Source information: The record gives the reactivity of an RNA of 177 nucleotides to DMS and 2A3. DMS adducts were read by reverse transcription with MarathonRT. For 2A3, 1,742 sequencing reads were counted. Reactivities are rounded to 0.1 and cut off at 0 and 3. Source: RMDB library RFMREP, as collected in RNAgym. The reactions ran in a buffer of 150 mM KOAc, 10 mM MgCl2 and 150 mM bicine (pH 8.5), at 24 C.
RNA sequence: GGGAACGACUCGAGUAGAGUCGAAAAUUCGAUUAUAAGUCGCCAGGUUUAUAUGAUUCGUUCUUGAGACACCACUUUCUUAUGACUGUGUUUCUAACUUACUUUGUGUGAGGACAUCGGUAGAUGGCUCAUAGUGCUGGUUCGCCAGCACUAUGAGAAAAGAAACAACAACAACAAC
Reactivity to DMS in 0.01 (KOAc 150mM, MgCl2 10mM, bicine 150mM(pH8.5), 24C), signal-to-noise 3, nucleotides 027 to 126: u000u000c090g000a110u010u000a080u000a050a070g010u010c010g010c100c070a110g000g010u000u000u000a040u000a060u010g010a090u010u000c060g020u000u000c020u000u000g000a090g020a070c060a060c040c050a080c070u000u000u000c060u000u000a080u010g010a060c100u010g010u000g010u000u000u000c020u000a060a120c040u000u000a030c020u000u000u000g020u000g000u000g000a010g000g010a110c030a010u000c030g010g010u010a100g010a050u000g010g020
Reactivity to 2A3 in 0.01 (KOAc 150mM, MgCl2 10mM, bicine 150mM(pH8.5), 24C), signal-to-noise 2, nucleotides 027 to 126: u050u000c020g030a040u050u060a030u110a140a030g030u050c020g070c070c050a020g070g000u000u170u000a110u000a010u130g070a060u010u110c030g040u080u000c000u040u070g080a030g020a030c030a020c060c000a040c060u040u130u000c070u060u160a140u250g060a060c070u040g010u020g000u100u000u000c040u050a080a080c020u020u050a020c000u100u150u250g160u120g020u000g100a010g010g010a010c020a020u020c000g000g050u070a090g040a040u010g050g000